Source: RMDB library PDB130, as collected in RNAgym. The record gives the reactivity of an RNA of 207 nucleotides to 2A3. Reactivities are given for positions 27 through 156. The RNA was probed in 150 mM KOAc, 10 mM MgCl2 and 150 mM bicine (pH 8.5) at 24 C. As a SHAPE reagent, 2A3 marks flexible, mostly unpaired nucleotides at the ribose 2'-OH.

RNA sequence: GGGAACGACUCGAGUAGAGUCGAAAAGUGGGGAAGGGUUCCAUAACAAUGGAAUUCACUUAUGGGUGAGUCGAUCCUAAGGUUUGGGUUAACUCUCUCUAAUAAGGUUACUAGGUCAUUGGAUCGAAAGUGAAGGUGGCUUUAACACUAGUGACUUCUCAAGUAAGGACUUCGGUCCUUACUUGAGAAAAGAAACAACAACAACAAC
Reactivity to 2A3 in 0.01 (KOAc 150mM, MgCl2 10mM, bicine 150mM(pH8.5), 24C), signal-to-noise 1, nucleotides 027 to 156: g050u060g000g000g030g000a060a070g010g000g010u010u000c040c000a040u080a140a120c220a130a050u040g010g000a000a000u040u100c040a020c030u120u070a070u160g040g000g000u020g000a000g020u030c050g040a000u000c000c020u030a120a080g300g000u020u150u220g010g020g000u010u010a000a000c000u000c000u030c000u000c000u000a010a130u060a100a060g030g000u050u000a020c040u000a020g120g000u010c000a120u070u040g000g000a000u020c000g030a030a060a000g000u000g000a020a000g040g000u010g000g040c000u170u030u110a150a060c020a020c040u040a060g020u010g100a010c000u040u050